[RMDB]
RNA sequence: GGGAACGACUCGAGUAGAGUCGAAAACGAAGUCGCGCAAGAACUGGUCUAUCGCAAAGCGCUGGUCGUAAAUGAUGGCCUCGGUGAUGGGCCUGAAGGUUACGGUCACGGUCAGCUUGCAAUCCGAGAGCUUGAGGCUGCUGAAGGUCUUGUCCGCAACAUCAUGUAGUUUCGACUACAUGAUGUUAAAAGAAACAACAACAACAAC
Reactivity to DMS in 0.01 (KOAc 150mM, MgCl2 10mM, bicine 150mM(pH8.5), 24C), signal-to-noise 4, nucleotides 027 to 156: c050g020a100a110g020u010c060g010c070g030c040a080a090g000a090a080c040u000g020g020u010c050u010a150u000c070g010c020a060a040a060g020c040g030c030u000g010g030u000c010g000u000a010a050a030u000g000a290u000g000g020c000c000u000c060g060g020u000g010a120u000g010g030g030c010c000u000g010a200a100g010g010u000u000a030c020g010g020u000c010a040c090g020g010u000c050a170g000c000u000u000g010c020a070a080u000c050c030g010a120g000a100g020c050u000u000g010a150g000g020c030u000g020c020u000g010a090a130g020g010u000c050u010u000g020u000c020c040g010c090
Reactivity to 2A3 in 0.01 (KOAc 150mM, MgCl2 10mM, bicine 150mM(pH8.5), 24C), signal-to-noise 9, nucleotides 027 to 156: c030g050a060a010g080u080c040g000c000g000c050a030a030g020a100a100c040u060g020g040u040c050u100a140u130c080g010c040a030a060a040g030c040g000c040u010g000g010u010c000g000u010a000a030a030u080g030a010u060g010g010c030c020u060c080g140g040u240g090a230u220g040g000g000c000c000u010g020a040a020g170g000u010u010a000c000g010g010u010c010a000c020g010g030u090c030a030g000c000u010u020g010c000a020a050u030c050c030g100a060g000a010g090c020u080u090g050a030g110g000c020u040g000c020u020g060a080a020g030g000u010c010u060u060g030u030c040c020g030c060